[RMDB]
RNA sequence: GGGAACGACUCGAGUAGAGUCGAAAAAGAGUGCAAUUAAGGUCGCAAUGCAGGGCAUGGGCGUUGAUGCCGCAAAACUGGAUGCUUACGGCAUCUGGACUGUUAAGCAGAUGACUCAAUUACUAAAUCGUCAGUAUGAGCAGGCAUACCCGCAGACUAAAUGGGUACAUUUCGAUGUACCCAUUUAAAAAGAAACAACAACAACAAC
Reactivity to DMS in 0.01 (KOAc 150mM, MgCl2 10mM, bicine 150mM(pH8.5), 24C), signal-to-noise 4, nucleotides 027 to 156: a070g000a080g040u000g010c030a050a080u010u010a110a100g040g010u000c000g010c050a070a110u000g020c040a110g010g000g010c040a090u000g020g000g010c020g030u010u010g000a110u000g010c030c010g000c060a050a040a060a100c010u010g020g010a100u000g030c030u000u000a090c140g010g000c000a010u000c010u000g000g020a120c060u000g020u000u000a110a150g020c030a130g010a110u010g010a020c030u000c030a040a100u000u000a090c090u010a040a060a070u000c070g020u000c030a060g020u000a060u000g010a090g020c010a040g010g010c010a090u000a050c020c000c010g000c050a120g000a130c170
Reactivity to 2A3 in 0.01 (KOAc 150mM, MgCl2 10mM, bicine 150mM(pH8.5), 24C), signal-to-noise 5, nucleotides 027 to 156: a000g080a020g020u060g020c040a040a120u110u080a170a050g070g000u070c040g020c060a050a040u060g040c050a050g050g040g000c040a040u070g010g000g050c020g010u010u110g050a060u050g000c010c000g000c040a050a080a010a060c010u010g020g020a020u050g020c020u100u210a040c140g020g000c000a000u000c010u000g000g030a010c020u030g020u090u120a070a030g020c010a000g010a080u030g040a090c030u010c060a040a110u110u050a090c030u070a040a120a150u120c070g040u040c030a000g030u040a090u050g030a030g020c040a030g020g010c010a020u050a080c000c010c050g000c070a020g030a020c030